[RMDB]
RNA sequence: GGGAACGACUCGAGUAGAGUCGAAAAAAAUGUCUGCUUCUCAUUCCUUGGGAGCAGGAAUAUGUUCAUAACAUGCUACAUUAACAAAGGAGUUCUCAGGGCUGCCAACCUUCUAGUAAAGGUUGAGCUCUGGCCCGUUAUUCGUAACGGGCCAGAGAAAAGAAACAACAACAACAAC
Reactivity to 2A3 in 0.01 (KOAc 150mM, MgCl2 10mM, bicine 150mM(pH8.5), 24C), signal-to-noise 3, nucleotides 027 to 126: a000a000a060u180g030u010c000u020g010c000u050u080c030u040c000a080u170u020c000c030u030u040g020g000g000a030g000c000a030g000g030a020a090u230a030u040g000u020u070c060a050u070a280a110c030a140u100g070c040u130a070c020a150u170u030a200a060c050a100a040a040g030g000a110g070u060u000c050u000c040a000g030g040g030c010u020g070c040c020a000a000c020c000u050u050c150u170a150g000u220a210a040a000g000g000u000u020g000a000g000
Reactivity to DMS in 0.01 (KOAc 150mM, MgCl2 10mM, bicine 150mM(pH8.5), 24C), signal-to-noise 1, nucleotides 027 to 126: a060a100a000u000g060u000c000u000g030c000u000u030c000u010c060a140u000u000c060c060u000u010g000g000g010a040g000c000a040g050g000a060a080u020a000u000g000u040u000c150a090u000a070a110c000a090u020g010c140u000a070c080a080u000u080a090a050c180a020a030a050g030g000a070g010u000u000c070u020c000a090g000g020g000c050u020g010c220c020a010a010c000c000u000u000c030u120a120g020u030a030a000a050g010g040u000u000g000a020g000
About this RNA
Conditions: 150 mM KOAc, 10 mM MgCl2 and 150 mM bicine (pH 8.5), 24 C. Structure probing data (2A3 and DMS) for a 177-nucleotide construct. For 2A3, 1,034 sequencing reads were counted. Values cover nucleotides 27 to 126. For 2A3 the reverse transcriptase was SuperScript II with manganese. The data come from the RNA Mapping Database (RMDB), library RFM100.